[RMDB]
RNA sequence: GGGAACGACUCGAGUAGAGUCGAAAAUGCAGGUGGCGGCAUGGAUGUGGAUCUGAAGGUCGAUCUGCGCACGGCAGUUUGCCAUUUGAAUUCAAGCGGCGGUGUGCGUGCUGUUAUCGAUACUUCACCGUGACUGCCUAUUCGUAGGCAGUCACGGAAAAGAAACAACAACAACAAC
Reactivity to 2A3 in 0.01 (KOAc 150mM, MgCl2 10mM, bicine 150mM(pH8.5), 24C), signal-to-noise 1, nucleotides 027 to 126: u040g000c000a040g060g010u030g100g000c000g000g000c030a020u040g040g040a000u070g050u100g170g010a090u000c000u090g000a040a040g020g000u020c000g020a040u000c080u130g060c020g000c010a020c050g040g000c010a020g060u030u180u280g020c020c000a000u050u000u060g210a290a270u300u230c030a000a020g000c040g000g020c000g050g000u020g010u020g150c000g000u040g000c010u060g130u080u040a100u000c030g000a010u090a200c040u020u010c010a000
Reactivity to DMS in 0.01 (KOAc 150mM, MgCl2 10mM, bicine 150mM(pH8.5), 24C), signal-to-noise 1, nucleotides 027 to 126: u000g030c080a070g020g040u000g030g000c020g020g000c080a060u010g010g010a070u000g020u000g020g000a100u010c130u010g000a040a030g010g010u000c000g010a030u000c120u010g000c040g000c030a030c020g000g000c010a020g000u010u000u010g030c030c040a070u000u020u010g010a260a170u010u010c030a010a020g000c050g000g020c020g000g000u000g000u010g010c000g050u000g000c010u010g010u000u000a040u000c000g000a020u000a100c030u000u000c010a160